Record summary:
This 177-nucleotide RNA was probed chemically with DMS and 2A3. 2A3 is a SHAPE reagent: it acylates the 2'-hydroxyl of flexible nucleotides of all four kinds. 2A3 adducts were read by reverse transcription with SuperScript II with manganese. The RNA was probed in 150 mM KOAc, 10 mM MgCl2 and 150 mM bicine (pH 8.5) at 24 C. For DMS the reverse transcriptase was MarathonRT.
[RMDB]
RNA sequence: GGGAACGACUCGAGUAGAGUCGAAAAAGACGUGCCGGUUACGACCGGCACGUCACACGGGGCAAUCCGAGGUGCCCGUGCGCUGUGCUCUGCCGCGGUGGUGCCUUCUGGUAGUCCCGGAGAUGAAGUGUGCUAGAAAAUUCGUUUUCUAGCACACAAAAGAAACAACAACAACAAC
Reactivity to DMS in 0.01 (KOAc 150mM, MgCl2 10mM, bicine 150mM(pH8.5), 24C), signal-to-noise 2, nucleotides 027 to 126: a120g010a020c000g030u010g000c030c000g000g010u000u000a140c290g020a130c010c000g010g030c000a000c020g000u000c000a000c060a080c020g000g020g020g010c010a090a060u000c010c070g000a010g000g010u000g000c020c000c020g000u030g010c100g050c060u010g010u010g000c180u040c090u010g010c080c000g010c010g020g020u010g000g010u000g010c000c000u000u040c030u000g010g050u000a180g020u000c010c000c010g020g010a020g020a110u020g030a080a120
Reactivity to 2A3 in 0.01 (KOAc 150mM, MgCl2 10mM, bicine 150mM(pH8.5), 24C), signal-to-noise 4, nucleotides 027 to 126: a000g010a000c000g000u000g020c000c010g030g050u110u130a180c300g070a020c070c000g000g000c010a010c000g000u000c000a000c000a000c000g000g000g000g000c050a110a080u030c020c020g010a010g000g010u000g000c000c000c000g000u070g000c160g000c000u130g040u270g160c060u090c070u250g020c030c000g030c010g090g050u180g050g030u010g040c020c000u140u110c090u160g010g000u010a020g000u010c000c010c010g000g010a070g000a020u180g090a100a110